[RMDB]
RNA sequence: GGGAACGACUCGAGUAGAGUCGAAAAAUGGCGAAUGCAUGGGGAACUACAUCUGUGUCGCGAGUUCGAUUCUCGCCAGGGCCUGGUCCUAUAGCUCAGUUGGUAGAGCAAGCUGUUCCCCGGACACAAAAUCCAGCUAGGUUCGCCUAGCUGGAAACCAGAUGAAUAACUUCGGUUAUUCAUCUGGAAAAGAAACAACAACAACAAC
Reactivity to 2A3 in 0.01 (KOAc 150mM, MgCl2 10mM, bicine 150mM(pH8.5), 24C), signal-to-noise 3, nucleotides 027 to 156: a020u130g040g010c050g100a150a060u140g030c100a070u110g010g000g000g020a030a050c020u100a040c090a190u080c090u050g040u050g090u200c050g020c030g030a000g020u060u100c050g030a060u070u020c000u000c010g000c020c020a020g010g030g000c020c060u100g030g030u050c000c010u100a080u120a060g020c000u010c030a070g030u160u130g150g040u110a060g010a000g000c010a030a010g050c030u040g010u030u030c000c000c000c000g010g020a050c040a000c000a050a040a020a080u060c010c000a000g000c000u000a000g020g020u030u050c090g020c010c000u000a000g000c000u010g000g000a000a000a000
Reactivity to DMS in 0.01 (KOAc 150mM, MgCl2 10mM, bicine 150mM(pH8.5), 24C), signal-to-noise 2, nucleotides 027 to 156: a100u010g030g020c080g020a080a030u010g010c040a100u000g010g030g010g050a060a160c020u030a070c080a090u000c050u020g030u000g010u000c030g010c040g000a030g020u010u000c060g000a300u010u000c020u010c000g010c020c050a160g020g000g030c020c010u010g030g020u010c030c020u000a070u000a100g000c040u000c000a050g000u000u020g000g000u010a080g000a050g020c000a060a070g020c010u020g010u000u000c010c000c020c020g040g000a100c040a060c070a060a060a100a110u000c010c000a030g000c000u000a020g020g010u000u010c300g000c000c010u020a000g000c000u000g000g000a000a030a030